[RMDB]
RNA sequence: GGGAACGACUCGAGUAGAGUCGAAAAACGGGGUAAGGGUUGGGGUGCCAUGCCGAGCCGCCCUACGUAAAGGGCACGAACGGUGCACCACGCAAUAGGUUCACCAUGGUGGCUAACGAUAGCAUGUUCGCGUUGGCUGGAAGAGCAGCGGUGUAGCGUAAUCACUACAGUUCGCUGUAGUGAUUACAAAAGAAACAACAACAACAAC
Reactivity to 2A3 in 0.01 (KOAc 150mM, MgCl2 10mM, bicine 150mM(pH8.5), 24C), signal-to-noise 2, nucleotides 027 to 156: a010c030g000g010g000g050u150a140a000g050g040g020u130u050g010g020g040g000u020g010c020c000a050u070g020c010c000g000a030g000c020c060g060c010c010c000u060a060c040g060u060a090a110a160g000g000g020c060a040c060g070a120a000c060g000g000u030g000c020a030c000c000a030c080g140c030a040a100u060a150g000g000u050u040c010a000c000c000a020u080g060g020u060g040g000c000u070a070a000c030g050a020u050a050g020c090a050u100g070u040u110c020g000c030g040u020u060g000g000c010u000g000g060a020a020g030a000g000c060a040g040c000g000g000u060g000u060a050g030c040
Chemical mapping of a 207-nucleotide RNA with 2A3. The data come from the RNA Mapping Database (RMDB), library RSTRND. The 2A3 profile rests on 1,134 reads.